Chemical mapping of a 177-nucleotide RNA with 2A3. It was measured as part of the RMDB library OK1LIB.
RNA sequence: GGGAACGACUCGAGUAGAGUCGAAAAGAUAGUUAUCUGCUCGGCGGGCUUAGCCUCGUUUGCCAAGCAGCUCACCUAGAGCCUAUGCGUUUGAGCUCCGAGGCAAACCAGUUGACGAGCUCGUCUACCCUGGCCGUACGUUCGCGUACGGCCAGGGAAAAGAAACAACAACAACAAC
Reactivity to 2A3 in 0.01 (KOAc 150mM, MgCl2 10mM, bicine 150mM(pH8.5), 24C), signal-to-noise 1, nucleotides 027 to 126: g090a020u250a070g030u250u300a190u050c020u080g030c100u040c000g000g000c010g020g020g000c000u080u000a030g050c020c000u000c000g000u000u040u090g000c000c000a000a000g080c000a000g010c000u000c000a040c040c010u030a130g000a030g110c040c010u180a110u300g010c180g200u050u110u070g000a000g000c000u030c030c000g050a000g000g000c050a000a000a000c040c050a000g010u100u090g140a110c050g000a000g010c000u000c000g000u030c010u010a050

The 2A3 profile rests on 433 reads. The reactions ran in a buffer of 150 mM KOAc, 10 mM MgCl2 and 150 mM bicine (pH 8.5), at 24 C.